The record gives the reactivity of an RNA of 177 nucleotides to 2A3 and DMS. For 2A3 the reverse transcriptase was SuperScript II with manganese. For DMS the reverse transcriptase was MarathonRT. Values are in units of 0.01, from 0 to 300, in steps of 10.
[RMDB]
RNA sequence: GGGAACGACUCGAGUAGAGUCGAAAACAAAAUAAUUUUUCGCCGCUGAGGCAUGCGCGUGCGCUCUGUCAGCAUGCCGAGCAGCGGGCGGAACGCACGCUCGUUCCGAACUCUACUCGAGAAAAAAGUAUAGGUUCUGAUUCGUCAGAACCUAUACAAAAGAAACAACAACAACAAC
Reactivity to 2A3 in 0.01 (KOAc 150mM, MgCl2 10mM, bicine 150mM(pH8.5), 24C), signal-to-noise 2, nucleotides 027 to 126: c020a000a180a050a110u280a060a140u060u050u030u040u070c030g000c010c010g020c040u040g040a030g050g010c020a000u020g010c060g000c040g040u190g040c050g020c070u080c120u200g050u080c020a010g000c050a090u010g000c000c040g100a080g030c000a000g000c000g000g010g000c020g000g000a000a000c000g030c030a100c120g040c080u080c050g000u000u020c010c000g010a060a020c000u000c000u000a000c010u040c000g000a000g030a000a000a030a000a000a000
Reactivity to DMS in 0.01 (KOAc 150mM, MgCl2 10mM, bicine 150mM(pH8.5), 24C), signal-to-noise 2, nucleotides 027 to 126: c210a090a070a160a130u030a090a060u010u000u000u000u000c030g020c050c000g000c070u010g020a190g000g000c000a010u000g010c040g040c120g040u000g000c020g010c130u010c090u010g020u000c010a250g000c010a010u000g020c010c060g010a140g010c020a030g010c000g000g010g000c000g010g000a000a000c010g000c070a100c140g000c110u000c010g010u000u000c000c000g020a040a010c020u010c010u000a000c000u000c010g000a010g010a010a020a070a120a060a050
The data come from the RNA Mapping Database (RMDB), library M2PK90. The DMS profile rests on 1,952 reads. Conditions: 150 mM KOAc, 10 mM MgCl2 and 150 mM bicine (pH 8.5), 24 C. Values cover nucleotides 27 to 126.